[RMDB]
RNA sequence: GGGAACGACUCGAGUAGAGUCGAAAAAAACUGUGUGACCUUGAGCAAGUCGGUCUCGCUCAGUCUCUUUCCUCAGCUGGGGAUAAAAUUCCUACUUCACAGGACUGUAAAGAUUAAGCAAGGCAAGGGAUAUGAAAGUGCUUAGCACAUAAUAGGGCACGGUCUAGUAUUUCGAUACUAGACCGUGAAAAGAAACAACAACAACAAC
Reactivity to DMS in 0.01 (KOAc 150mM, MgCl2 10mM, bicine 150mM(pH8.5), 24C), signal-to-noise 1, nucleotides 027 to 156: a050a020a040c030u020g000u000g020u000g020a040c010c020u010u030g070a090g010c030a090a070g010u010c090g040g020u000c030u000c010g040c020u000c000a040g050u000c000u010c030u010u000u000c030c020u010c020a120g030c130u020g050g020g000g010a140u000a020a090a090a300u000u000c020c000u000a040c040u000u030c070a080c050a070g000g010a060c050u010g010u020a080a030a050g000a090u010u010a000a060g000c040a110a110g000g000c040a050a040g040g010g020a020u000a070u000g040a020a000a030g020u000g060c000u010u000a050g000c000a030c010a040u020a020a030u020a040g010g000g000
Reactivity to 2A3 in 0.01 (KOAc 150mM, MgCl2 10mM, bicine 150mM(pH8.5), 24C), signal-to-noise 4, nucleotides 027 to 156: a000a000a010c070u050g010u020g020u020g020a030c010c020u040u040g030a040g040c060a080a020g050u070c040g050g050u040c030u020c040g020c010u030c010a010g050u000c020u000c000u100u060u020c010c020u040c040a050g030c090u150g010g000g010g000a030u110a080a130a030a020u070u040c020c010u030a080c040u070u070c050a080c020a070g010g030a040c040u050g060u160a070a090a050g040a030u090u080a010a000g000c020a010a030g030g000c000a000a000g000g000g000a000u010a020u060g030a000a010a000g100u130g040c000u000u020a010g000c020a000c000a010u180a080a010u010a020g000g000g000